Structure probing data (2A3 and DMS) for a 207-nucleotide construct. The RNA was probed in 150 mM KOAc, 10 mM MgCl2 and 150 mM bicine (pH 8.5) at 24 C.

[RMDB]
RNA sequence: GGGAACGACUCGAGUAGAGUCGAAAAUCGGACACGAGCUUGUCCCGGAGGAUGUCGUCUGUGACUUGGUCACGAUAUAGUACGAUGACACCUGUCCUUGCUGGAGCUGUCUUCUCCACUCUUCCUCAUGAUGCAAGUCUUCGGCUCGUACCAUCCGCGGCAUAUGUGAUUUCGAUCACAUAUGCCGAAAAGAAACAACAACAACAAC
Reactivity to 2A3 in 0.01 (KOAc 150mM, MgCl2 10mM, bicine 150mM(pH8.5), 24C), signal-to-noise 5, nucleotides 027 to 156: u070c010g000g010a010c000a010c050g020a000g030c060u150u210g070u090c020c030c010g020g030a010g030g010a110u030g010u050c030g030u050c110u110g040u070g040a030c020u110u240g110g010u040c020a020c070g010a040u070a030u060a220g170u110a090c060g050a100u010g010a000c010a080c050c020u060g040u110c000c020u040u090g060c040u070g000g020a030g020c070u040g200u150c050u100u050c030u000c020c000a050c040u090c010u090u090c010c000u070c030a060u160g060a010u060g050c040a090a020g040u000c020u020u120c080g020g000c010u000c030g030u040a010c040c030a010u010c010c010g000
Reactivity to DMS in 0.01 (KOAc 150mM, MgCl2 10mM, bicine 150mM(pH8.5), 24C), signal-to-noise 1, nucleotides 027 to 156: u010c020g080g010a060c060a120c050g030a090g040c050u000u000g010u010c090c020c080g000g000a300g010g060a020u000g000u000c000g070u000c010u000g060u000g000a070c010u020u000g000g060u010c020a050c040g010a070u000a060u000a230g010u010a060c070g000a010u010g010a020c020a000c000c030u030g010u010c010c060u010u000g000c040u000g010g040a120g040c030u000g010u000c060u000u000c050u000c020c040a040c090u000c030u000u020c040c080u000c020a150u010g010a000u000g000c060a010a030g000u000c050u000u010c080g070g010c000u000c030g050u000a020c010c030a050u040c030c060g000